The data come from the RNA Mapping Database (RMDB), library RFMREP. The record gives the reactivity of an RNA of 177 nucleotides to 2A3 and DMS. As a SHAPE reagent, 2A3 marks flexible, mostly unpaired nucleotides at the ribose 2'-OH. The RNA was probed in 150 mM KOAc, 10 mM MgCl2 and 150 mM bicine (pH 8.5) at 24 C.
[RMDB]
RNA sequence: GGGAACGACUCGAGUAGAGUCGAAAAUGCCGAGAUAAGUUUCAUUUUGCGUCUUUUGAAUUCGAAUAGUUCAUGUGAUGUGACGUAGUGGAACAUACCUGAAAAAAGGGGAUCCUUCGGGAUCCCCCAUACACGCAACGUUCGCGUUGCGUGUAUGAAAAGAAACAACAACAACAAC
Reactivity to 2A3 in 0.01 (KOAc 150mM, MgCl2 10mM, bicine 150mM(pH8.5), 24C), signal-to-noise 2, nucleotides 027 to 126: u060g000c010c030g050a030g000a070u100a130a050g010u040u000u000c000a030u010u150u230u100g000c000g020u030c000u060u300u050u040g060a020a030u070u090c180g080a140a110u110a270g020u000u010c010a000u090g120u120g200a170u120g070u080g070a010c020g020u010a010g000u050g020g000a020a020c020a030u050a040c010c020u020g060a080a000a030a000a010a010g000g000g020g000a000u000c000c000u040u040c160g010g010g000a010u000c020c100c000c000
Reactivity to DMS in 0.01 (KOAc 150mM, MgCl2 10mM, bicine 150mM(pH8.5), 24C), signal-to-noise 2, nucleotides 027 to 126: u000g010c020c030g010a010g010a040u000a010a110g000u000u000u000c000a010u000u000u000u000g050c000g020u000c000u020u020u000u000g000a030a010u000u000c210g010a180a130u010a060g010u000u010c000a010u000g010u020g010a100u010g000u000g000a030c090g020u000a030g050u000g000g000a020a010c000a100u000a020c020c010u010g000a010a060a090a080a100a120g020g000g000g000a010u000c000c000u010u010c160g020g000g010a000u000c010c000c010c000